[RMDB]
RNA sequence: GGGAACGACUCGAGUAGAGUCGAAAACGCCGACCAGGCCGGCGAACACCAACUCCAGCGUCACCAGAUUCGCGUCGAUCAGACCCUUGGCGAUUGUGGCCGCCACGGCGGUGGACAAAAACGCACCUCUGUCUAUCCAAUUCGUUGGAUAGACAGAAAAAGAAACAACAACAACAAC
Reactivity to DMS in 0.01 (KOAc 150mM, MgCl2 10mM, bicine 150mM(pH8.5), 24C), signal-to-noise 3, nucleotides 027 to 126: c080g020c020c030g000a140c040c080a070g000g030c060c010g010g020c020g000a100a090c100a160c060c050a070a120c090u000c050c040a060g010c060g010u010c040a060c050c040a090g000a090u010u000c040g020c040g030u000c040g000a060u000c070a120g010a150c040c010c020u000u010g020g010c010g010a090u000u000g020u010g000g000c040c010g010c010c000a020c170g010g020c030g010g030u000g000g000a050c090a020a030a040a060a060c040g000c040a120c140c080
Reactivity to 2A3 in 0.01 (KOAc 150mM, MgCl2 10mM, bicine 150mM(pH8.5), 24C), signal-to-noise 2, nucleotides 027 to 126: c010g010c000c010g000a060c000c090a050g020g110c020c000g000g040c020g010a040a020c050a040c010c020a040a050c020u020c040c040a030g010c010g080u050c010a050c070c020a050g010a110u100u050c050g020c020g090u060c010g030a050u080c020a030g100a160c030c020c000u070u140g070g000c000g060a060u000u120g020u050g070g020c000c010g000c000c020a020c060g080g000c020g000g020u030g020g010a040c070a030a180a040a000a010c010g000c010a030c000c020